The data come from the RNA Mapping Database (RMDB), library TTRDES.
An RNA of 177 nucleotides, treated with 2A3 and DMS and read out base by base.
High DMS reactivity at an A or C suggests that its Watson-Crick edge is free.
The reactions ran in a buffer of 150 mM KOAc, 10 mM MgCl2 and 150 mM bicine (pH 8.5), at 24 C.
RNA sequence: GGGAACGACUCGAGUAGAGUCGAAAAAAAAGAUAUGGACCACUUGCCGCCUAUACUUGGAUUUAUGUUUCGGAAACGAAACAUUGUCAGUAUAGGAACUACGGUCCGGGUGGUCCUAAGUCAAAAACUAUGUAUUCAACUUCGGUUGAAUACAUAGAAAAGAAACAACAACAACAAC
Reactivity to 2A3 in 0.01 (KOAc 150mM, MgCl2 10mM, bicine 150mM(pH8.5), 24C), signal-to-noise 2, nucleotides 027 to 126: a000a040a080a020g030a010u060a010u060g030g000a010c000c000a000c020u020u060g050c010c000g050c020c000u000a000u010a020c040u150u300g300g010a040u190u300u090a020u050g000u000u000u000c000g010g010a030a030a020c000g010a010a010a010c000a010u000u010g020u020c120a060g000u010a000u000a010g000g030a000a000c010u160a030c030g000g030u000c100c020g000g030g000u010g000g000u020c000c000u010a040a010g010u000c030a010a000a000a130a180
Reactivity to DMS in 0.01 (KOAc 150mM, MgCl2 10mM, bicine 150mM(pH8.5), 24C), signal-to-noise 3, nucleotides 027 to 126: a040a060a110a090g000a050u000a180u000g010g000a010c000c000a020c020u000u000g000c030c000g010c010c010u000a000u000a000c010u000u030g040g000a020u010u010u000a000u000g010u000u000u000c000g000g000a050a040a080c000g000a030a000a000c000a000u000u000g000u000c000a090g000u000a020u000a000g020g010a080a020c140u020a300c040g010g000u000c200c130g010g000g020u000g010g010u000c000c000u010a000a050g000u000c020a100a050a100a100a150